[RMDB]
Chemical mapping of a 177-nucleotide RNA with 2A3 and DMS.

RNA sequence: GGGAACGACUCGAGUAGAGUCGAAAAGAUAUGGACUGUCAAGGGAGCCACAUCGGAAACGAUUUGGCUUUGAUCUUGCAGUCCUAAGUCAAAUCCAUGCAUAUACGUUCGCGUAUAUGCAUGGAAAGCCAAUAUCUAACUUCGGUUAGAUAUUGGCAAAAGAAACAACAACAACAAC
Reactivity to 2A3 in 0.01 (KOAc 150mM, MgCl2 10mM, bicine 150mM(pH8.5), 24C), signal-to-noise 3, nucleotides 027 to 126: g040a000u050a030u130g000g000a000c000u010g060u300c060a020a020g000g020g030a010g010c000c020a020c000a020u010c010g020g040a040a080a050c010g000a000u000u020u010g000g000c000u050u060u030g020a010u030c010u010u000g000c000a000g000u000c000c000u010a040a010g040u030c040a070a010a120u020c000c000a000u010g010c000a000u000a000u000a020c000g000u020u080c300g000c000g190u000a000u000a000u000g000c000a000u000g000g000a020a000a000
Reactivity to DMS in 0.01 (KOAc 150mM, MgCl2 10mM, bicine 150mM(pH8.5), 24C), signal-to-noise 3, nucleotides 027 to 126: g000a020u000a300u010g000g000a010c000u000g010u030c030a010a010g000g000g000a010g020c010c000a010c070a020u000c000g000g000a080a100a150c010g000a010u000u000u000g000g010c000u000u000u010g020a070u010c000u010u000g000c010a000g000u000c000c000u000a010a040g020u000c050a100a110a150u000c000c000a000u000g010c000a010u000a000u000a000c000g010u000u010c220g020c020g030u010a000u000a000u000g000c010a010u000g000g000a000a020a060